Annotation: Structure probing data (2A3 and DMS) for a 177-nucleotide construct. For 2A3 the reverse transcriptase was SuperScript II with manganese. Reactivities are given for positions 27 through 126. High 2A3 reactivity points to a flexible backbone, as in loops and unpaired stretches. DMS adducts were read by reverse transcription with MarathonRT.
RNA sequence: GGGAACGACUCGAGUAGAGUCGAAAAGCUCAUUCUAAAGCUGAGAUCGUGGAUAUGUUGAGGAAACACACUUACGCCGAUGAGUUUGAGCAGAGUAGACGGAAGUUUGUUAACGGCGACGGAAAACCAACGUUGGGAAUUUCGAUUCCCAACGUUGAAAAGAAACAACAACAACAAC
Reactivity to 2A3 in 0.01 (KOAc 150mM, MgCl2 10mM, bicine 150mM(pH8.5), 24C), signal-to-noise 1, nucleotides 027 to 126: g000c020u020c030a000u110u000c050u170a090a020a040g020c000u010g020a010g010a120u220c100g030u010g040g040a060u060a130u300g200u120u200g090a160g020g130a020a090a000c000a010c000a000c050u040u000a010c150g000c000c000g090a080u080g060a030g000u030u060u020g010a010g000c000a010g000a000g000u000a020g000a020c040g050g020a010a010g050u040u190u170g030u060u070a050a030c090g070g010c070g010a000c000g000g040a070a040a080a020c020
Reactivity to DMS in 0.01 (KOAc 150mM, MgCl2 10mM, bicine 150mM(pH8.5), 24C), signal-to-noise 2, nucleotides 027 to 126: g000c010u010c010a050u020u000c030u010a130a220a180g010c020u020g000a040g000a040u000c170g020u000g000g020a180u000a080u020g030u000u010g000a130g000g020a090a090a060c030a020c030a050c020u000u000a060c190g050c040c000g010a160u000g030a030g010u000u000u000g000a050g030c000a050g010a090g010u000a100g010a000c020g010g010a080a100g000u000u000u000g020u000u000a040a100c050g010g010c160g000a070c060g000g000a100a060a040a100c140